This 177-nucleotide RNA was probed chemically with DMS. DMS adducts were read by reverse transcription with MarathonRT.

RNA sequence: GGGAACGACUCGAGUAGAGUCGAAAAGGGUUUAUGCAGGGUAGUGGCAUGAUAGUAAUCAAAACUUAGAACAUCCUAGCCACAGGAUGGAGAACGUUGUCAGGGAACAUCAAACGCAAGAGAUCCAAAUAGGGCAAGUUUUCGAACUUGCCCUAUUAAAAGAAACAACAACAACAAC
Reactivity to DMS in 0.01 (KOAc 150mM, MgCl2 10mM, bicine 150mM(pH8.5), 24C), signal-to-noise 2, nucleotides 027 to 126: g010g010g020u010u000u000a070u030g030c050a120g000g010g030u000a070g020u000g000g040c050a080u010g010a040u000a120g000u020a050a080u010c110a060a070a030a070c090u010u000a190g020a080a120c030a030u000c010c010u000a090g030c070c120a040c120a080g010g010a040u000g010g020a060g000a060a110c160g020u010u000g000u030c050a090g010g010g000a050a060c040a040u000c080a020a100a090c190g010c100a080a050g000a120g000a050u000c050c060a090